Conditions: 150 mM KOAc, 10 mM MgCl2 and 150 mM bicine (pH 8.5), 24 C. Structure probing data (DMS and 2A3) for a 207-nucleotide construct. For DMS the reverse transcriptase was MarathonRT. For DMS, 6,880 sequencing reads were counted. For 2A3 the reverse transcriptase was SuperScript II with manganese. Source: RMDB library M2RFOK, as collected in RNAgym.
[RMDB]
RNA sequence: GGGAACGACUCGAGUAGAGUCGAAAAACAUGCUGGCCAACCCAACCCCACGAUCCUCCAUCGGCAUGAUCAUGAUGUGUUCUCAAAUAUCAGGCCAGUAAAUCACCAUGCUCGUGCUGGUAAAGUCAACUUAUGCCCAAGUUCGCUUGGGCAUAAAAGAAGACAUAUCUUUCGAGAUAUGUCUUCUAAAAGAAACAACAACAACAAC
Reactivity to DMS in 0.01 (KOAc 150mM, MgCl2 10mM, bicine 150mM(pH8.5), 24C), signal-to-noise 2, nucleotides 027 to 156: a090c050a110u020g000c000u000g000g000c010c020a180a210c090c040c030a100a140c060c010c010c030a090c120g020a110u000c030c030u020c010c050a100u000c030g020g000c010a050u000g020a050u000c030a000u000g000a030u010g010u000g010u000u000c050u000c050a120a070a090u010a120u000c070a110g030g020c000c000a030g010u000a010a070a090u000c000a030c000c010a040u010g000c070u000c030g060u000g000c010u010g010g020u000a050a060a090g000u000c070a060a090c090u010u000a010u000g000c000c000c010a000a040g000u000u010c300g030c030u010u000g000g010g020c010a010u000a010a010a090
Reactivity to 2A3 in 0.01 (KOAc 150mM, MgCl2 10mM, bicine 150mM(pH8.5), 24C), signal-to-noise 3, nucleotides 027 to 156: a000c020a020u050g000c000u010g010g000c020c000a060a040c060c000c050a050a070c010c020c020c040a050c020g080a080u090c020c040u080c030c060a030u040c010g000g000c020a010u020g000a000u000c000a010u010g050a080u130g030u000g020u100u000c060u010c050a050a090a010u200a070u110c090a040g000g010c000c000a000g010u010a000a050a020u090c000a000c020c000a000u000g000c000u000c010g010u000g000c000u010g020g000u050a100a090a010g100u120c050a010a020c020u010u020a000u000g010c000c000c000a010a000g010u030u040c090g050c120u000u000g010g000g000c000a000u000a000a000a000